This 207-nucleotide RNA was probed chemically with 2A3 and DMS. It was measured as part of the RMDB library OK3TST. For 2A3, 1,181 sequencing reads were counted. The RNA was probed in 150 mM KOAc, 10 mM MgCl2 and 150 mM bicine (pH 8.5) at 24 C. For DMS, 2,492 sequencing reads were counted.
RNA sequence: GGGAACGACUCGAGUAGAGUCGAAAAUGUAUACUCUGGUAUCACGAUCGUCGGCGGAUCUGUCUCCGGUACUUCCGGUGUGGCAAUGCGCAACGUUAUCGAAGGGAAUGUCAUUGUCAGCCCCGGACAAUCAUGCAUCCGAAUGGUGGAUAGCUACGAUUAGCAGGGUAUUCGUACCCUGCUAAUCAAAAGAAACAACAACAACAAC
Reactivity to 2A3 in 0.01 (KOAc 150mM, MgCl2 10mM, bicine 150mM(pH8.5), 24C), signal-to-noise 3, nucleotides 027 to 156: u050g070u030a130u030a060c070u060c060u160g050g010u120a100u220c050a030c070g040a060u020c070g030u010c060g080g020c040g080g030a040u030c100u030g030u050c010u000c040c040g040g070u080a170c080u160u000c000c000g050g000u070g040u070g040g000c000a000a000u030g000c060g000c120a090a040c050g030u070u120a110u170c020g100a170a090g050g000g140a070a080u100g040u120c030a000u010u000g000u020c010a050g070c010c020c000c000g000g000a010c010a000a020u090c030a000u120g030c010a020u000c030c020g040a210a050u100g000g080u080g010g030a010u020a040g000c010u020a040c070
Reactivity to DMS in 0.01 (KOAc 150mM, MgCl2 10mM, bicine 150mM(pH8.5), 24C), signal-to-noise 1, nucleotides 027 to 156: u030g000u000a100u000a020c030u010c060u000g000g000u020a050u000c040a160c120g000a060u000c070g000u000c040g050g030c040g030g000a070u000c050u000g020u000c050u030c000c000g010g030u030a110c140u030u000c020c000g010g000u000g020u000g010g050c020a060a090u000g100c060g000c050a140a080c030g000u000u000a150u000c040g040a140a090g010g010g020a050a070u010g000u030c030a050u000u000g000u010c010a060g030c010c010c030c020g000g030a030c030a080a040u000c070a080u000g070c030a120u000c010c030g000a120a170u000g000g030u010g000g030a120u000a100g000c030u000a060c270